Record summary
An RNA of 177 nucleotides, treated with 2A3 and DMS and read out base by base. DMS adducts were read by reverse transcription with MarathonRT. Conditions: 150 mM KOAc, 10 mM MgCl2 and 150 mM bicine (pH 8.5), 24 C. It was measured as part of the RMDB library RFMREP.
RNA sequence: GGGAACGACUCGAGUAGAGUCGAAAACUAAGCUUGAAGUCGCCCCUGAAAAUAGACAUUGUUUGAGAUCACUCUUAAAAGAAGAGGUUGAUAGAGUCGGGAUAUAAGUACCAAGCUUUUGCGAGGUCGAUUAUCUAUACUUCGGUAUAGAUAAUCGAAAAGAAACAACAACAACAAC
Reactivity to 2A3 in 0.01 (KOAc 150mM, MgCl2 10mM, bicine 150mM(pH8.5), 24C), signal-to-noise 3, nucleotides 027 to 126: c000u020a030a030g020c000u040u020g080a140a030g010u000c000g020c040c000c000c020u060g120a100a060a020a060u100a040g070a030c020a100u110u140g110u140u090u180g140a120g010a020u010c000a010c030u010c010u020u060a170a160a050a000g120a070a010g020a040g010g070u070u100g050a050u020a050g090a010g020u040c010g030g020g030a010u050a010u020a160a050g030u050a030c010c010a030a000g050c050u060u100u160u220g050c040g030a030g010g110u020
Reactivity to DMS in 0.01 (KOAc 150mM, MgCl2 10mM, bicine 150mM(pH8.5), 24C), signal-to-noise 3, nucleotides 027 to 126: c020u000a130a170g010c000u000u000g000a110a070g010u000c010g010c100c020c010c030u020g020a070a080a090a140u000a130g010a090c040a120u000u000g000u010u010u010g010a180g010a060u010c010a090c010u000c010u000u000a080a080a140a090g010a030a010g010a030g000g000u000u010g020a050u000a090g000a110g000u000c030g000g010g010a110u000a030u000a050a100g020u010a070c020c030a050a200g010c020u010u010u000u010g010c050g020a220g010g010u000